[RMDB]
RNA sequence: GGGAACGACUCGAGUAGAGUCGAAAAGCGCCGAUUCGUCGGCGCAAAAAUCCUAAGUCAAACAAUGAUGGAUCCCUUCUCGAAGAACUAUCGGAAACGAUAGGGAGAGAAAGGAUCUUGAGUUUGAUAUGGAAAAAAAGGGUCGUUCGCGACCCAAGACCUAUUACACCUUCGGGUGUAAUAGGUCAAAAGAAACAACAACAACAAC
Reactivity to 2A3 in 0.01 (KOAc 150mM, MgCl2 10mM, bicine 150mM(pH8.5), 24C), signal-to-noise 1, nucleotides 027 to 156: g000c020g030c000c000g020a050u070u040c060g050u030c000g120g080c000g000c040a010a000a000a000a000u050c020c000u020a090a000g010u010c000a000a000a000c010a040a300u150g000a020u130g100g000a010u000c000c000c000u000u000c000u000c020g270a230a030g000a050a020c000u000a010u000c000g050g040a030a080a090c010g010a000u020a000g010g010g000a020g000a000g000a000a000a030g000g000a000u000c000u010u010g050a010g000u000u000u000g000a000u020a050u100g000g030a050a080a120a010a000a140a200g030g000g020u040c050g030u040u130c280g030c000g130a030c010c020c000a000a040